[RMDB]
RNA sequence: GGGAACGACUCGAGUAGAGUCGAAAAGCUGGGGACACAGUGUCAACCGGGUCCACGGUGAGUGGGGUGUUGUGGUCUGAGGGCCCAUGCCAGUCCCCUACCCAGGUGCUGUGAUCACUCUCAGAUGAAAUAAUGUGCCGUUCGCGGCACAUUAUUUAAAAGAAACAACAACAACAAC
Reactivity to DMS in 0.01 (KOAc 150mM, MgCl2 10mM, bicine 150mM(pH8.5), 24C), signal-to-noise 1, nucleotides 027 to 126: g010c050u000g000g010g010g000a100c050a030c020a000g040u000g000u020c080a100a060c120c060g000g030g000u010c070c030a030c020g040g050u000g010a180g010u000g010g020g000g020u000g000u000u000g010u020g030g010u000c010u000g010a150g020g000g000c040c020c010a030u000g000c010c020a150g000u010c050c020c000c040u000a040c010c000c030a120g030g000u000g000c020u000g000u000g010a070u000c160a150c130u020c010u000c000a030g020a080u010g000